This 177-nucleotide RNA was probed chemically with DMS and 2A3. For 2A3 the reverse transcriptase was SuperScript II with manganese. The data come from the RNA Mapping Database (RMDB), library OK2TRN. Reactivities are given for positions 27 through 126. Conditions: 150 mM KOAc, 10 mM MgCl2 and 150 mM bicine (pH 8.5), 24 C.
RNA sequence: GGGAACGACUCGAGUAGAGUCGAAAAGGGUGGUGGCCUGCCCGCAUGCUGCCAUCUGUGUCGGAGGUGACGGGCGAGCUCCCCUGACGACACUAGCCAGGAAAGGGGGGCAGAAGCUCCAGGCUACGAGAGCAGUAAAUUUCGAUUUACUGCUCUCAAAAGAAACAACAACAACAAC
Reactivity to DMS in 0.01 (KOAc 150mM, MgCl2 10mM, bicine 150mM(pH8.5), 24C), signal-to-noise 9, nucleotides 027 to 126: g000g010g020u000g010g020u000g000g010c010c080u000g010c010c040c070g020c090a060u010g020c030u000g010c010c010a030u000c020u000g010u000g010u000c050g000g010a090g010g020u000g010a100c090g020g010g010c040g010a190g010c020u000c010c010c000c010u000g000a280c050g010a060c050a060c120u000a070g010c050c040a160g000g010a060a140a060g010g010g010g010g000g020c010a040g000a100a110g010c040u000c020c040a100g000g010c050u000a080c210
Reactivity to 2A3 in 0.01 (KOAc 150mM, MgCl2 10mM, bicine 150mM(pH8.5), 24C), signal-to-noise 4, nucleotides 027 to 126: g040g020g000u050g000g030u030g020g010c020c020u040g000c020c020c000g000c010a020u120g020c000u040g020c010c000a040u010c050u060g090u030g080u080c060g040g050a060g040g030u070g030a060c040g000g030g000c020g000a020g010c010u030c000c000c000c010u020g010a020c040g010a000c010a010c130u100a050g070c030c050a030g030g050a070a060a020g010g000g000g010g000g000c020a010g060a080a010g020c010u050c020c020a030g030g020c010u020a030c080